RNA sequence: GGGAACGACUCGAGUAGAGUCGAAAAAGCAGUUGUAGUCUAUAUUCAGAUGUCUAUAUAUUGAUGAACUGCUGAGAUGGCUGCUGAGGGAUGAAUAUAGAUAUAUUGAUGAGCUGCUGAAGAUAGAGCAGAAGCAGAAGAGAAUUAAUAAGCAGUAGAUGAACUACAUGUUCGCAUGUAGUUCAUCAAAAGAAACAACAACAACAAC
Reactivity to 2A3 in 0.01 (KOAc 150mM, MgCl2 10mM, bicine 150mM(pH8.5), 24C), signal-to-noise 2, nucleotides 027 to 156: a000g000c020a010g000u030u080g040u220a030g010u050c010u010a040u050a040u030u090c010a090g050a190u130g040u070c050u010a030u020a050u010a040u300u090g080a070u040g040a130a080c000u050g000c000u010g000a070g000a020u080g130g000c020u020g000c010u010g010a080g070g040g010a040u080g010a060a000u040a000u010a040g000a010u000a000u010a010u120u080g110a140u010g090a030g000c010u010g000c030u070g000a010a000g090a090u160a010g090a000g090c050a020g030a070a020g010c010a010g000a090a000g030a010g010a080a000u080u060a110a090u130a080a000g000c030a010g020u060a080
Reactivity to DMS in 0.01 (KOAc 150mM, MgCl2 10mM, bicine 150mM(pH8.5), 24C), signal-to-noise 1, nucleotides 027 to 156: a020g010c000a070g000u000u000g010u000a130g010u000c000u010a110u000a050u030u000c010a110g000a140u000g010u010c020u000a110u000a060u000a120u030u020g030a070u010g000a110a170c030u000g050c020u000g000a190g000a150u000g040g010c020u000g000c030u010g000a080g020g070g000a160u000g010a040a060u030a040u010a050g030a110u000a080u000a070u020u000g030a180u000g010a120g000c000u000g010c060u010g000a130a130g000a110u000a040g020a120g040c050a090g030a080a140g030c070a080g000a070a090g000a170g000a020a150u000u020a150a100u000a140a080g000c000a100g020u000a250
The record gives the reactivity of an RNA of 207 nucleotides to 2A3 and DMS. The data come from the RNA Mapping Database (RMDB), library OK3TST. High DMS reactivity at an A or C suggests that its Watson-Crick edge is free. For 2A3, 724 sequencing reads were counted. For DMS the reverse transcriptase was MarathonRT.